[RMDB]
RNA sequence: GGGAACGACUCGAGUAGAGUCGAAAAAGCGGUGUGAUCAUGGCCGUGCAGCACACCGGGCUGCCGAUCCACGGUGUCCAGUUCCAUCCGGAGUCGAUUCUCACCGAGGGCGGGCACCGCAUACUGGUCACCCAAGCAAGUUCGCUUGCUUGGGUGAAAAAGAAACAACAACAACAAC
Reactivity to 2A3 in 0.01 (KOAc 150mM, MgCl2 10mM, bicine 150mM(pH8.5), 24C), signal-to-noise 4, nucleotides 027 to 126: a000g050c030g020g000u010g020u030g010a110u090c060a130u090g070g000c030c030g050u100g020c000a010g030c000a030c010a010c110c010g030g050g000c000u030g000c010c000g060a050u020c030c000a030c020g000g030u000g020u000c020c010a110g040u190u200c020c000a110u020c060c100g040g000a010g010u060c070g110a250u190u070c080u000c040a120c090c070g010a060g010g010g020c010g000g010g000c000a000c010c000g000c000a000u070a070c040u040g080g000
Reactivity to DMS in 0.01 (KOAc 150mM, MgCl2 10mM, bicine 150mM(pH8.5), 24C), signal-to-noise 2, nucleotides 027 to 126: a080g010c010g000g010u010g020u010g010a130u000c070a070u010g010g000c300c000g000u060g020c030a040g040c050a030c050a170c010c110g000g020g000c020u030g030c000c020g030a110u060c010c040a170c000g040g000u000g000u000c020c020a130g050u020u000c020c030a030u010c030c120g040g000a010g000u000c110g010a130u060u020c000u010c060a100c100c060g010a100g010g030g020c100g000g010g000c060a000c000c000g000c050a070u030a060c100u000g090g000
The record gives the reactivity of an RNA of 177 nucleotides to 2A3 and DMS. The RNA was probed in 150 mM KOAc, 10 mM MgCl2 and 150 mM bicine (pH 8.5) at 24 C. The data come from the RNA Mapping Database (RMDB), library OK1LIB. For 2A3 the reverse transcriptase was SuperScript II with manganese. In probing experiments dimethyl sulfate is read out at A N1 and C N3, which are open when not base-paired. DMS adducts were read by reverse transcription with MarathonRT.